RNA sequence: GGGAACGACUCGAGUAGAGUCGAAAAGUGGAAAAUGUCACGUUGAAGGAAGGGGCUAAAUUGCAUUCAGUUCGAUCAAUUUCAAGUCUCACUAAAAAUCUCAGUGACUUCAAGACGAUUCCGACACCAAUAAGCGGUGUUUCGACACCGCUUAUUGAAAAGAAACAACAACAACAAC
Reactivity to DMS in 0.01 (KOAc 150mM, MgCl2 10mM, bicine 150mM(pH8.5), 24C), signal-to-noise 4, nucleotides 027 to 126: g000u000g010g000a140a080a070a080u010g000u000c000a070c050g020u030u000g030a100a120g000g020a150a100g000g000g010g020c020u000a030a020a010u010u000g020c300a040u010u000c030a180g040u010u010c180g000a010u000c020a010a010u000u010u000c180a060a010g020u010c000u000c000a160c260u020a030a050a050a070a080u000c050u010c050a090g030u000g010a020c010u000u000c030a050a250g000a040c050g010a300u000u000c010c000g020a100c160a060c230
Reactivity to 2A3 in 0.01 (KOAc 150mM, MgCl2 10mM, bicine 150mM(pH8.5), 24C), signal-to-noise 2, nucleotides 027 to 126: g100u090g020g070a030a040a050a060u130g010u000c000a000c110g060u030u150g040a030a010g050g030a060a100g030g000g000g000c010u010a020a000a010u010u030g010c020a020u040u210c020a030g190u200u130c070g040a010u010c000a010a010u010u040u020c030a030a000g000u000c010u030c000a060c040u090a070a110a020a010a100u060c030u000c070a010g020u020g020a020c000u030u030c060a050a000g070a000c000g000a010u060u000c020c010g040a020c050a040c050